Chemical mapping of a 177-nucleotide RNA with 2A3 and DMS.
Reactivities are given for positions 27 through 126.
The reactions ran in a buffer of 150 mM KOAc, 10 mM MgCl2 and 150 mM bicine (pH 8.5), at 24 C.
RNA sequence: GGGAACGACUCGAGUAGAGUCGAAAAUCAAGAGUACAACUUGGAACUAUGAUUGUGCUCGGAGUAAAUCAUAGUCGACAAAGUCGAAUACAUGUUACUCAUCUGUCAUGUAUUCAAGUUGACAGAAGAUAGUUGGCACAUUCGUGUGUUAACUAUCAAAAGAAACAACAACAACAAC
Reactivity to 2A3 in 0.01 (KOAc 150mM, MgCl2 10mM, bicine 150mM(pH8.5), 24C), signal-to-noise 9, nucleotides 027 to 126: u070c030a020a020g020a010g040u040a050c010a010a010c000u020u050g050g050a080a030c040u040a060u060g050a190u030u070g120u090g130c050u060c160g070g010a110g030u160a030a070a020u090c030a030u040a040g030u010c000g030a020c180a080a250a030g090u110c070g040a020a000u020a030c030a010u040g040u090u150a040c030u040c060a160u040c060u060g050u020c000a000u010g010u020a050u010u030c010a010a010g010u000u000g020a020c020a010g050a040a000
Reactivity to DMS in 0.01 (KOAc 150mM, MgCl2 10mM, bicine 150mM(pH8.5), 24C), signal-to-noise 3, nucleotides 027 to 126: u010c040a020a070g010a020g010u000a030c020a000a010c020u010u040g010g010a230a120c050u010a170u020g000a120u000u000g070u010g010c060u050c200g140g140a300g110u030a160a030a010u000c080a050u000a040g000u030c000g010a100c190a210a210a300g040u050c200g010a050a040u000a000c030a010u000g000u010u060a060c100u000c120a090u030c110u000g000u000c010a000u020g000u000a030u040u000c000a070a050g020u000u020g000a010c020a120g000a140a040